Structure probing data (2A3 and DMS) for a 177-nucleotide construct.
Source: RMDB library M2PK90, as collected in RNAgym.
Conditions: 150 mM KOAc, 10 mM MgCl2 and 150 mM bicine (pH 8.5), 24 C.
The DMS profile rests on 13,286 reads.

RNA sequence: GGGAACGACUCGAGUAGAGUCGAAAAGAUAUUAACGCGCGUGCUGUGUCUAACGCGAAUUACCCAGUUAUUUUCGACUUUACUCGAGUCGUUAUAGCGUGAAAUGACACAGUUAUCCGCGAACGAACUAUUCAUUAACGUUCGCGUUAAUGAAUAGAAAAGAAACAACAACAACAAC
Reactivity to 2A3 in 0.01 (KOAc 150mM, MgCl2 10mM, bicine 150mM(pH8.5), 24C), signal-to-noise 1, nucleotides 027 to 126: g010a020u170a040u250u180a120a030c030g050c010g000c030g100u070g000c020u010g020u020g010u000c030u070a050a000c000g010c000g000a000a090u100u040a030c030c040c010a000g060u080u060a150u070u080u010u020c000g010a000c000u060u030u030a030c000u000c020g000a000g000u010c000g000u000u000a010u020a000g000c000g000u100g060a010a060a080u200g000a020c020a000c010a100g100u080u050a130u080c030c010g030c020g000a020a010c030g020a040a010
Reactivity to DMS in 0.01 (KOAc 150mM, MgCl2 10mM, bicine 150mM(pH8.5), 24C), signal-to-noise 8, nucleotides 027 to 126: g010a190u010a060u010u000a060a100c210g010c010g010c070g010u000g010c040u000g020u000g010u000c010u000a080a020c000g010c000g010a080a070u010u010a090c070c040c080a120g000u010u010a060u000u000u000u000c000g010a010c000u000u000u000a010c020u000c020g000a000g010u000c000g000u000u000a020u000a100g010c010g020u000g010a050a060a100u010g010a030c020a020c030a040g000u000u010a220u000c080c010g000c000g000a080a080c110g000a100a150